[RMDB]
RNA sequence: GGGAACGACUCGAGUAGAGUCGAAAAAGCUUUCCCCAGCCAACGGAAGGCGUCGUGUUGGGUAUAUUGAGCGUGCGGCGCGGCGUGCGCCAGACACUUAGCCGCAGCACCUCGUGCUCCACCAGAAACGCCGAUAAUGCUUCGGCAUUAUCGGCGUAAAAGAAACAACAACAACAAC
Reactivity to 2A3 in 0.01 (KOAc 150mM, MgCl2 10mM, bicine 150mM(pH8.5), 24C), signal-to-noise 2, nucleotides 027 to 126: a000g110c050u000u050u000c000c000c000c000a040g050c010c040a070a080c080g120g020a090a010g050g020c040g000u030c070g040u080g000u090u000g020g080g000u010a040u000a030u090u240g010a010g020c130g000u010g000c050g050g100c020g060c000g090g050c040g030u070g000c030g060c010c030a040g110a040c040a020c080u270u220a020g030c000c000g070c030a030g000c000a000c000c000u000c000g000u010g000c000u000c010c000a030c010c020a030g060a100a190
Reactivity to DMS in 0.01 (KOAc 150mM, MgCl2 10mM, bicine 150mM(pH8.5), 24C), signal-to-noise 1, nucleotides 027 to 126: a000g010c010u000u010u010c000c000c010c220a060g030c140c110a110a100c190g000g050a020a110g060g000c000g010u000c060g000u020g000u000u000g060g020g000u000a000u030a090u080u000g000a020g000c050g000u000g000c100g000g000c070g000c040g000g000c140g060u040g000c040g030c040c020a030g010a160c110a100c090u000u040a170g080c010c040g010c010a120g000c010a020c030c040u010c020g000u000g030c000u000c040c030a110c010c010a070g000a120a050

The record gives the reactivity of an RNA of 177 nucleotides to 2A3 and DMS. The data come from the RNA Mapping Database (RMDB), library OK1LIB. The reactions ran in a buffer of 150 mM KOAc, 10 mM MgCl2 and 150 mM bicine (pH 8.5), at 24 C. Reactivities are given for positions 27 through 126. DMS adducts were read by reverse transcription with MarathonRT.